[RMDB]
RNA sequence: GGGAACGACUCGAGUAGAGUCGAAAACGCUGGGCCAAUGCUUCGUGUGUGGGAGGCGACGCAAAAUACUGAAGCGCGCACGGUAUUUUGCGUCGCCGAAGAACACAUUAUCGAAGCUUGGCCUGUGCUGAAGCGCGCACGGCAACCGAAAGGUGCGGUGUCAUGUUAGGUUCGCCUAACAUGACACAAAAGAAACAACAACAACAAC
Reactivity to 2A3 in 0.01 (KOAc 150mM, MgCl2 10mM, bicine 150mM(pH8.5), 24C), signal-to-noise 1, nucleotides 027 to 156: c060g010c010u030g000g000g000c000c020a070a030u300g010c000u000u030c020g020u030g010u000g010u020g020g020g020a020g000g040c010g000a000c040g000c000a000a000a000a000u020a010c020u040g050a220a020g020c030g000c000g000c020a010c030g020g020u000a010u000u000u000u000g000c000g000u000c010g000c000c000g010a000a000g010a000a000c000a000c000a010u070u130a070u270c000g000a010a020g000c000u000u000g000g000c000c000u010g010u000g000c030u090g040a090a020g000c000g030c020g000c020a020c040g090g000c040a150a100c020c020g060a120a030a030g020g000u040g020c010g040

Description: Structure probing data (2A3) for a 207-nucleotide construct. It was measured as part of the RMDB library RNAMAK. The 2A3 profile rests on 1,651 reads. The RNA was probed in 150 mM KOAc, 10 mM MgCl2 and 150 mM bicine (pH 8.5) at 24 C.